[RMDB]
RNA sequence: GGGAACGACUCGAGUAGAGUCGAAAACAAGGCGGAUUCGUCCGCCUUGGGUGCGUAGCUGCGUAAUUUUAAUAGCUACGCUUAAAAAAUUUAAAUUACGCAAUGUGGGGGCUUUCGAGCCCCCAAAUAAUAAAUACGUCUUCGGACGUAUUUAUUAAAAAGAAACAACAACAACAAC
Reactivity to DMS in 0.01 (KOAc 150mM, MgCl2 10mM, bicine 150mM(pH8.5), 24C), signal-to-noise 1, nucleotides 027 to 126: c000a010a000g000g020c010g010g000a020u000u020c200g020u000c010c000g020c000c000u000u000g000g000g000u000g010c000g010u000a000g010c020u010g010c000g000u000a000a000u000u010u010u030a020a160u010a040g000c020u010a000c010g030c010u000u000a000a040a300a030a040a060u000u000u000a070a040a040u010u000a000c000g010c020a120a100u000g010u010g000g030g000g000g020c000u000u010u020c100g020a010g040c030c000c000c000c000a000a000a030